[RMDB]
RNA sequence: GGGAACGACUCGAGUAGAGUCGAAAAUGGAUGAUCUCCCUCUGAAUUUAGAGAAAUAACUGUCAAAAGGCAGGGGAUACUCCAAUGCAAUGCCUUGAUGGACUUCUUUUGGCUCCAUAUAGAAAAAGAUAUCGCGUAUAUUCGUAUACGCGAUAUCAAAAGAAACAACAACAACAAC
Reactivity to DMS in 0.01 (KOAc 150mM, MgCl2 10mM, bicine 150mM(pH8.5), 24C), signal-to-noise 3, nucleotides 027 to 126: u000g010g010a040u010g010a080u010c030u010c010c080c010u000c030u010g010a110a100u010u010u010a070g010a020g000a100a060a080u000a080a160c090u020g000u000c040a070a120a060a100g000g020c010a010g020g030g000g010a050u010a050c080u010c020c010a020a090u030g030c160a130a070u000g000c020c010u000u000g020a090u010g000g000a060c040u000u000c080u010u000u000u000g000g020c150u000c020c010a030u000a150u000a060g000a040a040a080a110a130
Reactivity to 2A3 in 0.01 (KOAc 150mM, MgCl2 10mM, bicine 150mM(pH8.5), 24C), signal-to-noise 2, nucleotides 027 to 126: u050g020g020a010u050g010a030u060c020u010c000c070c010u040c010u040g200a280a280u110u220u170a080g000a020g060a060a090a080u180a070a100c020u060g000u060c030a030a120a180a300g000g000c000a000g040g010g010g000a000u030a100c040u030c030c000a010a040u070g030c040a110a030u100g050c010c000u000u150g030a020u030g010g010a010c000u050u050c010u030u200u090u050g010g000c040u000c020c010a030u070a020u040a110g180a050a060a020a000a000